[RMDB]
RNA sequence: GGGAACGACUCGAGUAGAGUCGAAAAGAGGAAGAGCAGGCUGAGGCUCGACUUUGCCCUACCCGAGCUGGCACAUGCCAUAAGCUACCGGGCGUCUGCUGAACCGGCUGGAUUUGCUGGUUGGCUGGAACCUGAUAAUAUUCGUAUUAUCAGGUUCAAAAGAAACAACAACAACAAC
Reactivity to 2A3 in 0.01 (KOAc 150mM, MgCl2 10mM, bicine 150mM(pH8.5), 24C), signal-to-noise 9, nucleotides 027 to 126: g050a000g020g020a030a050g000a020g030c020a020g200g050c100u150g090a110g170g000c010u020c010g020a020c010u080u070u090g010c000c000c010u030a040c010c010c010g000a010g000c020u030g010g010c020a100c050a270u300g000c010c000a070u060a110a040g000c010u040a100c050c030g010g010g000c030g080u050c070u090g000c010u060g050a030a020c000c010g010g000c020u060g060g180a300u190u150u200g000c000u000g010g010u020u020g010g000c030u040g120
Reactivity to DMS in 0.01 (KOAc 150mM, MgCl2 10mM, bicine 150mM(pH8.5), 24C), signal-to-noise 9, nucleotides 027 to 126: g010a060g000g010a060a250g010a030g010c020a050g010g020c100u000g010a130g020g010c020u000c020g010a260c030u000u000u000g010c010c000c010u000a110c020c010c010g010a050g020c030u000g000g020c010a210c270a080u010g010c010c020a140u010a230a070g010c020u000a080c210c030g000g000g010c140g010u000c080u000g010c020u000g010a040a030c020c010g010g010c010u010g010g010a140u010u010u000g010c010u010g010g010u000u000g010g010c010u010g010